[RMDB]
RNA sequence: GGGAACGACUCGAGUAGAGUCGAAAAUUUGUCUCUGCCGAGGGCUUACUCUGCUGCAGGGAGCUGGGGGCCCUGUGCACACAUCCAAGGAAAACACCCUUGUUGUCACAGCCGAAACAACAGACGCUAGUCAUAACUGAUUCGUCAGUUAUGACUAAAAAGAAACAACAACAACAAC
Reactivity to DMS in 0.01 (KOAc 150mM, MgCl2 10mM, bicine 150mM(pH8.5), 24C), signal-to-noise 8, nucleotides 027 to 126: u010u010u000g010u000c020u000c030u000g020c030c050g000a080g010g000g000c080u000u000a140c050u010c020u000g010c040u010g030c050a080g010g010g000a150g010c060u000g010g010g010g000g000c030c030c000u010g010u000g010c070a120c110a040c080a050u010c100c030a040a070g010g000a060a050a090a130c210a110c090c010c010u000u010g000u000u010g000u010c050a080c090a080g000c050c040g010a110a080a060c080a020a050c070a070g010a110c230g010c150
Reactivity to 2A3 in 0.01 (KOAc 150mM, MgCl2 10mM, bicine 150mM(pH8.5), 24C), signal-to-noise 2, nucleotides 027 to 126: u070u050u120g030u010c000u010c020u050g000c010c030g030a040g000g030g020c000u030u050a090c010u030c040u100g050c020u060g000c040a060g040g040g030a030g030c050u070g020g000g000g000g030c000c000c000u000g010u030g000c010a020c000a000c000a070u000c050c020a020a030g050g000a060a160a070a050c050a120c010c010c030u020u060g070u050u080g060u050c030a010c030a070g020c000c020g060a040a060a010c050a020a010c000a040g080a040c050g000c100
An RNA of 177 nucleotides, treated with DMS and 2A3 and read out base by base. The data come from the RNA Mapping Database (RMDB), library OK2TRN. Conditions: 150 mM KOAc, 10 mM MgCl2 and 150 mM bicine (pH 8.5), 24 C. The DMS profile rests on 11,501 reads.